The record gives the reactivity of an RNA of 207 nucleotides to 2A3.
The 2A3 profile rests on 690 reads.
It was measured as part of the RMDB library OK3TST.
The reactions ran in a buffer of 150 mM KOAc, 10 mM MgCl2 and 150 mM bicine (pH 8.5), at 24 C.
2A3 adducts were read by reverse transcription with SuperScript II with manganese.

[RMDB]
RNA sequence: GGGAACGACUCGAGUAGAGUCGAAAACCCCGUGUGGAACACACGACUAAGCUUCGGCUUAGUAAGAGCAACUUAGGAUUGUAGGCUCCCCGGCGUGUCUCGAACCAUGCCGGGCCAAACCCAUAGGGCUGGCGGUCCCUGUGCGGUCAUAAUUCAACUACCCCUAGGGGUUCGCCCCUAGGGGUAGAAAAGAAACAACAACAACAAC
Reactivity to 2A3 in 0.01 (KOAc 150mM, MgCl2 10mM, bicine 150mM(pH8.5), 24C), signal-to-noise 1, nucleotides 027 to 156: c030c000c000c020g050u040g000u050g050g220a120a040c030a000c000a000c060g010a000c000u000a000a000g000c000u010u110c200g070g000c020u010u000a000g000u020a040a050g000a000g000c000a010a140c040u080u150a040g000g050a090u050u070g020u050a030g020g010c000u000c000c000c000c000g000g010c000g000u020g020u050c030u090c200g070a050a060c020c000a000u000g000c000c010g000g020g000c000c000a010a000a000c000c000c000a000u000a000g040g010g000c040u080g130g050c050g000g030u100c000c010c000u000g010u010g030c200g030g000u020c020a050u110a240a010u140u030c010a060a070